Overview:
Chemical mapping of a 207-nucleotide RNA with DMS and 2A3. It was measured as part of the RMDB library M2RFPK. The reactions ran in a buffer of 150 mM KOAc, 10 mM MgCl2 and 150 mM bicine (pH 8.5), at 24 C. The DMS profile rests on 3,611 reads.
RNA sequence: GGGAACGACUCGAGUAGAGUCGAAAAGGGUGAUGUCUCCUAACCUUUAUCAAUGGGGGCACUCGGUCGUGCUGUGGGUAGAAAUUUUAUUUCGUGCCUACCUUAGACGCUUGUCGUCGGCAGUAUGUGGGACUGAUGAACUUCGGUUCAUCAGUAAUCCGAUCAUACCUUUCGAGGUAUGAUCGGAAAAAGAAACAACAACAACAAC
Reactivity to DMS in 0.01 (KOAc 150mM, MgCl2 10mM, bicine 150mM(pH8.5), 24C), signal-to-noise 1, nucleotides 027 to 156: g040g010g010u010g020a110u000g010u000c000u000c010c000u000a110a080c030c010u000u000u000a090u000c100a090a100u000g030g090g030g000g050c030a090c040u000c010g010g040u000c030g000u000g000c040u010g000u000g010g010g030u000a300g000a010a020a070u000u010u010u000a130u000u000u000c000g000u010g080c010c030u000a030c030c160u000u070a120g010a090c040g000c050u000u000g040u000c000g020u000c030g000g000c080a110g000u010a040u000g040u010g020g010g000a060c000u000g000a020u000g010a000a010c010u000u010c290g050g010u000u000c000a000u000c000a020g000u000a010a170
Reactivity to 2A3 in 0.01 (KOAc 150mM, MgCl2 10mM, bicine 150mM(pH8.5), 24C), signal-to-noise 3, nucleotides 027 to 156: g050g010g000u080g000a040u010g010u030c000u010c010c020u030a060a040c000c010u120u260u190a120u160c100a070a060u130g020g000g000g010g000c000a020c000u030c020g030g000u010c010g020u030g010c040u050g000u060g000g030g000u020a040g100a020a060a010u170u270u120u150a180u040u120u090c050g050u070g010c000c000u000a000c010c000u030u020a060g000a010c010g020c050u140u290g120u160c020g020u010c000g000g030c000a040g020u060a040u130g100u080g050g010g020a010c000u000g000a010u000g000a000a000c010u020u030c130g080g000u000u010c000a000u000c000a010g000u000a010a010